[RMDB]
RNA sequence: GGGAACGACUCGAGUAGAGUCGAAAAUGACGGGUGCUGAGGGAACCUUUGACAAGGUGAUUGUGGCGGUUCCAGCUCCGACGGCGGCGAUGUUGUUGAAGUCUGUGGCACCGGAGGCGUCGGCGUACUCGCUAUUUUAUUUCGAUAAAAUAGCGAGAAAAGAAACAACAACAACAAC
Reactivity to DMS in 0.01 (KOAc 150mM, MgCl2 10mM, bicine 150mM(pH8.5), 24C), signal-to-noise 5, nucleotides 027 to 126: u020g010a090c100g000g000g010u000g010c030u000g010a130g010g010g000a080a030c010c030u000u000u010g010a060c090a030a040g000g030u010g010a180u000u000g010u000g010g040c180g000g000u000u000c020c020a130g010c030u010c020c030g010a070c050g010g000c030g000g000c070g010a070u010g010u000u010g020u020u000g010a070a140g000u000c040u000g020u000g000g000c040a050c040c030g010g010a130g000g000c030g000u000c020g000g000c060g010u000a140
Reactivity to 2A3 in 0.01 (KOAc 150mM, MgCl2 10mM, bicine 150mM(pH8.5), 24C), signal-to-noise 2, nucleotides 027 to 126: u130g040a030c040g020g000g030u070g000c020u040g040a070g050g070g020a020a030c000c000u040u050u150g100a030c050a050a010g100g060u170g160a210u050u070g010u040g030g030c030g030g000u050u000c010c000a020g000c020u000c010c010g020a020c010g010g030c000g030g050c040g060a080u100g000u040u000g010u000u040g030a070a010g030u000c030u020g060u080g060g010c010a020c030c030g000g020a010g010g020c030g000u030c020g010g000c020g010u020a020
This 177-nucleotide RNA was probed chemically with DMS and 2A3.
The reactions ran in a buffer of 150 mM KOAc, 10 mM MgCl2 and 150 mM bicine (pH 8.5), at 24 C.
Values cover nucleotides 27 to 126.